[RMDB]
Chemical mapping of a 177-nucleotide RNA with DMS. The RNA was probed in 150 mM KOAc, 10 mM MgCl2 and 150 mM bicine (pH 8.5) at 24 C.

RNA sequence: GGGAACGACUCGAGUAGAGUCGAAAAGAUAUGGAGGUCAGUAGUCGCACAGUUUCUAUUCCUUUACACUCGGAAACGAGUGUAAAGGAAUGAAACUGUGAACUACGACGAAUGACCUCCUAAGUCAUCAAGUGAAUCAGUUCGCUGAUUCACUUGAAAAAGAAACAACAACAACAAC
Reactivity to DMS in 0.01 (KOAc 150mM, MgCl2 10mM, bicine 150mM(pH8.5), 24C), signal-to-noise 3, nucleotides 027 to 126: g000a040u010a300u000g000g010a020g000g000u000c000a020g020u020a300g000u000c050g030c000a010c000a020g020u000u010u000c000u000a060u010u020c000c000u010u000u000a010c000a010c010u000c020g000g000a160a120a220c010g010a030g010u000g000u000a010a000a010g010g000a000a000u000g000a000a000a010c000u000g020u000g010a050a030c150u020a300c020g010a020c040g000a170a300u000g000a000c010c000u010c000c000u000a000a050g000u000c040a170